[RMDB]
RNA sequence: GGGAACGACUCGAGUAGAGUCGAAAAAGGAGGCACCCAUGGGACUUACAAAAUCUCUCAAUGCCUUGGCAGUCGGUUUGGCGUUUUUGUUCGUAGCGAUGAUGCUUUUCAUCUGACGCGACGUGAACUGCACAGUUUUAUUCGUAAAACUGUGCAGAAAAGAAACAACAACAACAAC
Reactivity to 2A3 in 0.01 (KOAc 150mM, MgCl2 10mM, bicine 150mM(pH8.5), 24C), signal-to-noise 1, nucleotides 027 to 126: a000g090g010a020g010g000c020a010c000c010c010a020u010g000g000g010a000c010u000u060a060c250a080a120a030a070u020c000u000c000u000c070a000a020u100g000c000c000u000u030g030g000c000a010g040u010c000g080g000u030u070u070g020g000c050g010u010u000u000u070u140g070u000u030c070g020u040a030g030c010g060a010u080g010a040u060g030c030u200u080u090u140c010a000u000c020u050g050a040c010g010c000g020a000c020g090u110g030a090a060
Reactivity to DMS in 0.01 (KOAc 150mM, MgCl2 10mM, bicine 150mM(pH8.5), 24C), signal-to-noise 4, nucleotides 027 to 126: a090g000g000a040g010g010c030a040c030c020c020a120u020g000g000g010a060c080u000u030a110c300a040a080a130a110u010c040u000c010u010c090a060a060u010g020c040c030u000u000g010g020c040a040g010u020c030g010g010u000u000u000g030g000c180g020u000u010u000u000u000g010u030u000c040g020u010a080g000c130g000a140u000g000a020u000g000c300u010u020u030u000c000a010u000c020u000g010a170c140g000c000g000a020c040g010u020g000a080a150
Record summary: Conditions: 150 mM KOAc, 10 mM MgCl2 and 150 mM bicine (pH 8.5), 24 C. Structure probing data (2A3 and DMS) for a 177-nucleotide construct. High 2A3 reactivity points to a flexible backbone, as in loops and unpaired stretches.